An RNA of 207 nucleotides, treated with 2A3 and DMS and read out base by base. DMS adducts were read by reverse transcription with MarathonRT. For DMS, 2,933 sequencing reads were counted.
RNA sequence: GGGAACGACUCGAGUAGAGUCGAAAACUGAUCUUCGGAUCAGAAAAAAGCGUACUACAUGGGAGAACGACGAAGGUAACAAUGCUAAUCCCAAAUAGGAUUAGCUAUACCAGAGUUCUUUGAUCAUGUAUCGCAAAAAGAGACCUUCGGGUCUCAAGCUAUAGUUACUCUUCGGAGUAACUAUAGCAAAAGAAACAACAACAACAAC
Reactivity to 2A3 in 0.01 (KOAc 150mM, MgCl2 10mM, bicine 150mM(pH8.5), 24C), signal-to-noise 4, nucleotides 027 to 156: c000u000g000a000u000c020u050u090c290g160g010a010u000c010a020g070a080a100a010a000a000a010g030c050g040u090a060c060u000a000c030a010u020g030g010g000a070g000a020a020c060g230a030c020g010a100a040g030g000u050a120a090c100a180a140u190g000c000u000a000a000u020c000c030c040a090a170a190u300a070g000g000a000u000u000a000g000c010u020a020u020a030c010c010a000g020a020g050u080u000c000u090u040u020g090a080u080c000a000u000g000u010a020u220c020g000c000a050a050a000a050a030g020a010g000a000c010c000u050u080c300g130g000g010u000c010u000c000a000a010
Reactivity to DMS in 0.01 (KOAc 150mM, MgCl2 10mM, bicine 150mM(pH8.5), 24C), signal-to-noise 2, nucleotides 027 to 156: c030u030g000a000u000c000u000u000c300g060g000a010u030c000a000g010a000a030a110a110a110a070g000c030g020u000a060c090u010a000c000a030u010g010g010g030a300g000a030a050c040g030a110c020g030a300a280g000g010u010a040a110c140a110a090u030g010c000u000a010a030u000c000c000c010a050a080a210u020a050g000g020a000u010u000a000g020c000u000a080u000a030c010c030a050g000a300g000u000u000c120u010u000u000g020a300u010c010a050u000g000u010a000u000c000g000c030a030a080a080a060a070g020a020g020a040c000c000u000u010c240g040g010g020u010c010u000c030a000a180
The reactions ran in a buffer of 150 mM KOAc, 10 mM MgCl2 and 150 mM bicine (pH 8.5), at 24 C. For 2A3 the reverse transcriptase was SuperScript II with manganese.